[RMDB]
RNA sequence: GGGAACGACUCGAGUAGAGUCGAAAAGGCUACGAGAUCGCCAACCCACGCAUGAUUAAAGCGCUUAAACAACGGCGCGGGCGUGAAUGCUACGACAUCGAAACGGGCAAGUUGGUGCCUAUGGAUCGACCGACUAUUAGUUCGCUAAUAGUCGGUCAAAAGAAACAACAACAACAAC
Reactivity to 2A3 in 0.01 (KOAc 150mM, MgCl2 10mM, bicine 150mM(pH8.5), 24C), signal-to-noise 2, nucleotides 027 to 126: g040g010c000u050a000c040g040a040g000a170u090c040g040c000c000a010a010c000c030c000a020c010g000c020a090u110g020a150u300u300a080a120a050g010c060g020c030u050u080a140a270a070c020a040a050c080g000g000c030g020c000g030g030g000c000g000u030g030a100a040u040g020c000u050a070c060g090a020c000a060u190c120g020a010a040a000c000g010g000g000c020a060a020g030u030u010g070g020u070g040c000c040u080a140u050g160g020a040u110c060
Reactivity to DMS in 0.01 (KOAc 150mM, MgCl2 10mM, bicine 150mM(pH8.5), 24C), signal-to-noise 3, nucleotides 027 to 126: g040g040c020u000a160c190g000a100g000a030u020c030g030c020c010a050a050c020c300c020a030c030g010c010a080u000g010a190u010u010a040a080a170g030c000g000c000u000u000a090a030a140c280a060a090c140g010g020c010g020c010g010g020g020c000g010u000g000a160a130u000g010c020u000a040c040g000a030c050a120u000c100g020a040a050a080c010g000g000g020c000a090a090g010u000u000g010g020u000g030c060c020u000a060u020g010g000a160u000c120